RNA sequence: GGGAACGACUCGAGUAGAGUCGAAAAUCUGUACUGAAUACAAACAAUUUCAAAUGGAAGAGCUUCUAAAACAUGUCCCUUGGUAGAAGUUGAGAAUCGUUUAUUCCAAGCAAAAUUAAUUCCAAGUAGCAUUUGUUUUUAAUUUACUCUGUAUCAGAGUUGUACAAGAGUUCGCUCUUGUACAACUAAAAGAAACAACAACAACAAC
Reactivity to 2A3 in 0.01 (KOAc 150mM, MgCl2 10mM, bicine 150mM(pH8.5), 24C), signal-to-noise 1, nucleotides 027 to 156: u020c040u010g050u120a070c070u010g060a180a070u050a020c010a070a150a020c010a010a060u040u210u270c080a190a090a040u120g000g000a020a010g000a050g070c000u080u080c030u180a080a030a080a060c010a010u050g050u110c020c050c000u010u010g070g010u110a020g010a100a020g010u010u050g100a100g070a080a040u080c070g030u030u140u030a050u150u000c010c030a000a000g020c030a040a080a110a110u030u080a040a080u030u050c080c000a050a030g050u010a030g030c010a070u040u040u020g010u050u000u000u050u000a040a070u050u030u100a010c010u040c010u090g040u110a010u220c000a030g020
Reactivity to DMS in 0.01 (KOAc 150mM, MgCl2 10mM, bicine 150mM(pH8.5), 24C), signal-to-noise 1, nucleotides 027 to 156: u010c050u000g040u000a160c020u020g060a010a300u020a110c020a060a050a080c070a110a070u000u000u000c000a140a220a100u000g000g000a120a070g010a070g000c010u020u000c040u000a040a050a040a060c040a040u000g000u000c000c020c000u000u020g010g010u010a040g020a060a250g060u000u010g010a160g020a020a050u000c060g000u000u000u000a180u050u000c050c030a000a160g000c060a070a070a050a130u010u010a000a170u000u000c050c000a080a170g000u000a070g040c060a060u040u010u000g000u030u020u000u000u000a000a070u010u010u000a070c040u000c040u000g010u010a100u000c080a140g010
An RNA of 207 nucleotides, treated with 2A3 and DMS and read out base by base. For DMS, 1,228 sequencing reads were counted. The reactions ran in a buffer of 150 mM KOAc, 10 mM MgCl2 and 150 mM bicine (pH 8.5), at 24 C. The data come from the RNA Mapping Database (RMDB), library OK3TST.